[RMDB]
RNA sequence: GGGAACGACUCGAGUAGAGUCGAAAAAAGGCAUCGAAGACUCCCAAGGAUACGGAGUGACUCUGGGUAUCAGCUUAGCACAUGUUAUUUUAGGUGUUUCAACAGUGACACCAUUGAGGUAGUGUGGCUUAGUGAAGGAAUGUGGGCUUGGACGGGAUAUUACCCCUCCUUUCGAGGAGGGGUAAUAAAAAGAAACAACAACAACAAC
Reactivity to DMS in 0.01 (KOAc 150mM, MgCl2 10mM, bicine 150mM(pH8.5), 24C), signal-to-noise 1, nucleotides 027 to 156: a040a050g030g020c040a100u000c050g030a140a090g010a050c000u000c040c010c040a070a130g040g000a110u000a050c120g020g020a190g000u000g010a050c050u010c030u000g030g010g030u000a050u010c070a190g020c050u010u000a110g080c070a040c020a110u020g020u000u000a060u010u000u000u000a130g020g030u020g000u010u010u020c070a050a100c060a090g030u000g040a080c030a030c010c020a160u000u010g000a050g070g070u000a010g020u000g010u030g040g010c030u000u000a060g030u000g000a070a090g040g020a080a020u000g000u000g030g140g000c050u010u000g000g010a110c060g020g020g000a130
Reactivity to 2A3 in 0.01 (KOAc 150mM, MgCl2 10mM, bicine 150mM(pH8.5), 24C), signal-to-noise 2, nucleotides 027 to 156: a000a000g130g010c060a130u120c150g030a070a040g040a070c040u020c020c010c040a040a020g090g000a040u060a110c080g030g000a070g000u110g010a050c020u010c060u080g000g000g040u010a030u120c030a040g030c010u030u030a000g040c050a010c010a180u070g030u110u100a140u030u100u010u040a040g000g010u010g070u060u090u090c080a120a140c020a070g060u090g090a010c000a000c000c000a000u000u140g040a040g000g090u020a000g050u000g020u020g070g000c000u030u050a020g020u050g040a090a000g040g020a090a000u120g020u040g030g000g070c000u000u000g030g000a000c040g030g000g000a010
Chemical mapping of a 207-nucleotide RNA with DMS and 2A3. Source: RMDB library OK3TST, as collected in RNAgym. For 2A3, 702 sequencing reads were counted. For DMS, 2,235 sequencing reads were counted. Conditions: 150 mM KOAc, 10 mM MgCl2 and 150 mM bicine (pH 8.5), 24 C.